[RMDB]
RNA sequence: GGGAACGACUCGAGUAGAGUCGAAAAACUUUUUGAUUCGUCAAAAAGUAACUACCGAGAAUGCGACUCGGUAUUCGCAAAUAACCCUUGGAAACAAGGGAACAAACUAACGUUUCGACGUUAGUAACGCCUAAGAGGUAUUCGUACCUCUUAGGCGAAAAGAAACAACAACAACAAC
Reactivity to DMS in 0.01 (KOAc 150mM, MgCl2 10mM, bicine 150mM(pH8.5), 24C), signal-to-noise 1, nucleotides 027 to 126: a020c020u000u000u000u000u000g000a010u010u010c220g010u000c000a010a000a020a000a000g000u000a110a080c120u000a010c020c010g000a000g010a190a090u000g050c210g010a030c010u010c010g010g000u000a010u000u000c050g030c030a050a070a060u000a160a120c000c000c020u000u000g000g000a180a110a180c010a000a000g000g000g000a040a000c250a050a110a070c000u010a000a010c000g020u000u000u040c130g060a040c010g010u000u000a000g020u000a020a090
Reactivity to 2A3 in 0.01 (KOAc 150mM, MgCl2 10mM, bicine 150mM(pH8.5), 24C), signal-to-noise 2, nucleotides 027 to 126: a000c010u030u020u000u010u000g000a000u020u050c100g040u020c030a010a010a010a010a010g010u000a000a040c030u040a040c000c040g000a000g080a160a090u210g130c130g090a050c020u010c000g050g030u020a060u010u060c070g000c050a010a060a100u090a160a190c000c020c000u000u000g020g030a040a040a010c000a000a000g000g020g010a000a050c010a000a100a000c000u010a000a000c010g030u000u060u190c240g120a000c000g000u010u000a000g020u000a030a020